[RMDB]
RNA sequence: GGGAACGACUCGAGUAGAGUCGAAAAGAUAUGGAAAUAUUACGUAGUCCCUGACUCCGAUAAGCUGGUAUCGGAAACGAUAUACAGCUUUUGACGGAGAUGGGACUACGUAAUAUUUCCUAAGUCAUCUUGAGGAAUGGUUCGCCAUUCCUCAAGAAAAAGAAACAACAACAACAAC
Reactivity to DMS in 0.01 (KOAc 150mM, MgCl2 10mM, bicine 150mM(pH8.5), 24C), signal-to-noise 1, nucleotides 027 to 126: g000a080u010a300u000g000g000a000a000a000u010a000u000u000a010c000g010u000a000g010u000c020c030c010u000g030a260c080u010c010c000g040a230u000a020a010g040c000u000g000g010u000a000u000c010g030g020a120a070a120c000g000a040u000a010u000a070c000a010g000c000u000u000u010u000g010a300c110g000g000a040g010a300u000g000g030g000a020c000u000a000c010g000u000a000a000u000a000u000u000u000c000c000u010a030a040g000u030c100a130